The record gives the reactivity of an RNA of 170 nucleotides to DMS and 2A3. Values cover nucleotides 27 to 129. Reactivities are rounded to 0.1 and cut off at 0 and 3. For 2A3 the reverse transcriptase was SuperScript II with manganese. The 2A3 profile rests on 7,292 reads.
RNA sequence: GGGAACGACUCGAGUAGAGUCGAAAACCAAGAGACGGAUGACUUUCCCCUAUUGGUUGGGAAAAGUCCCGGAACCAGGAAAUGGGAAAGAGACGGUAGAAAAGAGCGAGCCUCCCAGUUUUCGAGUAUGCCAGGCAGUUCGCUGCCUGGAAAAGAAACAACAACAACAAC
Reactivity to DMS in 0.01 (KOAc 150mM, MgCl2 10mM, bicine 150mM(pH8.5), 24C), signal-to-noise 5, nucleotides 027 to 129: c020c020a090a080g020a070g020a160c010g040g000a100u060g020a040c020u030u010u010c020c020c010c020u030a160u050u060g060g010u000u000g040g000g070a010a040a030a040g080u010c010c030c100g030g010a060a050c060c050a050g010g030a020a140a050u000g000g000g000a030a060a050g010a130g040a090c180g000g000u010a070g030a060a050a070a070g070a000g040c090g020a060g000c050c050u040c040c000c040a090g020u030u000u010u030c030g030a040g030u080a040u030g010
Reactivity to 2A3 in 0.01 (KOAc 150mM, MgCl2 10mM, bicine 150mM(pH8.5), 24C), signal-to-noise 5, nucleotides 027 to 129: c010c000a060a030g090a000g020a010c010g030g020a060u170g010a050c010u000u020u000c000c000c000c000u090a180u240u250g170g050u120u090g000g020g000a080a020a030a000g050u010c010c000c000g020g030a010a050c000c010a000g050g020a000a050a070u100g010g020g030a000a050a000g050a010g010a000c050g050g030u120a020g090a060a080a000a000g050a010g020c020g030a000g000c000c010u020c000c010c000a010g010u010u000u020u060c010g010a030g090u080a050u250g100